[RMDB]
RNA sequence: GGGAACGACUCGAGUAGAGUCGAAAACCGCUUCGUUCGCGAAGCGGAAAAAAGAUAUGGAGCAAUAGGGACCGAUAAGUGACAAUCGGAAACGAUUGAAUCACUUUUGACGGUCCCAUUGCUCCUAAGUCAAAAAACCACCGGUUCGCCGGUGGAAGACCAUGGAUUGAUUCGUCAAUCCAUGGUCAAAAGAAACAACAACAACAAC
Reactivity to 2A3 in 0.01 (KOAc 150mM, MgCl2 10mM, bicine 150mM(pH8.5), 24C), signal-to-noise 1, nucleotides 027 to 156: c000c000g000c010u010u000c000g090u000u100c220g030c050g290a000a000g000c020g000g010a210a010a000a000a020a000g020a000u020a000u070g000g000a000g010c000a000a030u080a300g030g000g010a030c050c100g230a180u100a270a000g000u010g010a000c000a000a000u000c010g000g010a010a010a010c000g010a000u020u030g060a090a020u020c020a000c000u010u010u020u060g110a090c080g000g040u000c040c000c000a000u000u000g010c000u000c000c000u000a010a000g000u000c010a000a000a000a000a130a130c000c150a010c010c060g000g100u090u090c280g020c100c010g050g000u020g000g040a040a020